The record gives the reactivity of an RNA of 177 nucleotides to DMS.
RNA sequence: GGGAACGACUCGAGUAGAGUCGAAAACCUUUCCUCGUCAUCCUGGGUCAACCUCUUAAGUUCCUCUUCCUCCUCCUUGCUGAGGUUCUUCCCUCCCGCGCUGAGUUGAUUCUUCUUGUUCUUGAGGGUUGAAAUGGAUGUUCGCAUCCAUUUCAACAAAAGAAACAACAACAACAAC
Reactivity to DMS in 0.01 (KOAc 150mM, MgCl2 10mM, bicine 150mM(pH8.5), 24C), signal-to-noise 2, nucleotides 027 to 126: c020c010u000u000u000c030c010u000c070g000u000c050a060u000c040c040u010g020g000g020u000c080a070a140c060c020u030c030u030u010a090a130g010u000u000c010c020u010c080u010u000c020c020u000c010c010u000c030c030u010u000g010c080u000g000a090g010g010u000u010c070u010u000c020c010c020u010c030c020c020g020c110g020c070u000g000a110g000u000u000g000a090u010u000c020u000u010c070u000u000g000u000u000c040u000u010g000a170g020g010
Record summary: It was measured as part of the RMDB library 15KREP.